[RMDB]
RNA sequence: GGGAACGACUCGAGUAGAGUCGAAAACCCCUCCGGCCCUUCCUCGACUCGGGUUGGCUCAUCCUCGGCGAGGGCGACGGUCCUCAGUUCUCUCUAUUCUUUCUUGAAAGAGGAGACUGCUGGACCAUAAGGUGCCGGUUCGCCGGCACCAAAAGAAACAACAACAACAAC
Reactivity to DMS in 0.01 (KOAc 150mM, MgCl2 10mM, bicine 150mM(pH8.5), 24C), signal-to-noise 3, nucleotides 027 to 129: c070c010c020c130u030c020c000g020g010c060c010c050u000u000c000c060u020c030g030a110c050u050c060g010g010g100u040u020g020g040c070u010c090a100u020c090c030u010c080g000g000c040g000a050g020g030g010c000g040a140c140g060g000u040c010c000u040c040a030g010u000u000c020u000c020u010c030u030a180u080u000c030u030u050u060c150u000u000g040a020a050a020g040a090g010g060a060g010a050c040u020g010c030u040g050g030a030c010c040a030u010a030a090
Reactivity to 2A3 in 0.01 (KOAc 150mM, MgCl2 10mM, bicine 150mM(pH8.5), 24C), signal-to-noise 4, nucleotides 027 to 129: c000c000c000c000u030c000c000g010g000c000c000c000u040u070c010c010u030c020g040a110c010u010c070g010g000g010u010u060g030g020c000u030c020a060u030c010c010u020c000g010g020c000g000a020g020g030g000c050g030a040c060g000g000u000c000c000u000c010a060g030u220u020c020u000c010u000c010u030a300u150u000c030u060u200u050c090u070u180g060a030a010a000g010a000g090g000a010g000a000c000u000g030c040u020g000g000a000c000c000a000u040a010a030
Notes
The data come from the RNA Mapping Database (RMDB), library 15KLIB. Chemical mapping of a 170-nucleotide RNA with DMS and 2A3. For DMS, 11,816 sequencing reads were counted. The 2A3 profile rests on 9,182 reads. The RNA was probed in 150 mM KOAc, 10 mM MgCl2 and 150 mM bicine (pH 8.5) at 24 C.